[RMDB]
RNA sequence: GGGAACGACUCGAGUAGAGUCGAAAAGAUAUGGAACUCCCUGAAGGCUGAUGACCUCGGAAACGAGCAAGGCCGGCAGGGAGGUUCCUAAGUCAAACUAAUCGUGCAGUUCGCUGCACGAUUAGAACAUACGAGGACGGUUCGCCGUCCUCGUAUGAAAAGAAACAACAACAACAAC
Reactivity to 2A3 in 0.01 (KOAc 150mM, MgCl2 10mM, bicine 150mM(pH8.5), 24C), signal-to-noise 1, nucleotides 027 to 126: g000a030u100a120u080g000g000a030a020c000u000c010c000c000u000g030a030a000g020g070c030u010g020a300u260g020a300c000c050u000c010g000g050a080a050a130c000g030a000g100c010a050a100g000g000c000c000g000g030c030a020g000g010g030a020g020g010u000u010c000c010u000a080a020g050u030c030a020a050a110c020u010a000a000u020c030g020u010g040c010a000g050u080u160c200g160c180u000g000c000a000c000g000a000u000u010a000g000a000a000
Reactivity to DMS in 0.01 (KOAc 150mM, MgCl2 10mM, bicine 150mM(pH8.5), 24C), signal-to-noise 2, nucleotides 027 to 126: g010a050u000a300u000g000g000a020a090c010u000c000c000c000u000g000a020a030g000g040c010u010g000a110u010g000a140c300c030u010c030g010g000a110a130a180c020g010a000g010c030a120a130g000g030c010c000g000g010c000a000g000g020g000a010g000g000u000u000c000c000u010a020a130g010u000c040a140a070a230c000u000a020a040u000c000g010u000g020c000a020g010u000u010c250g000c000u020g030c000a010c000g010a000u000u000a000g000a150a230

This 177-nucleotide RNA was probed chemically with 2A3 and DMS. The DMS profile rests on 1,556 reads. Source: RMDB library TTRDEL, as collected in RNAgym. High DMS reactivity at an A or C suggests that its Watson-Crick edge is free.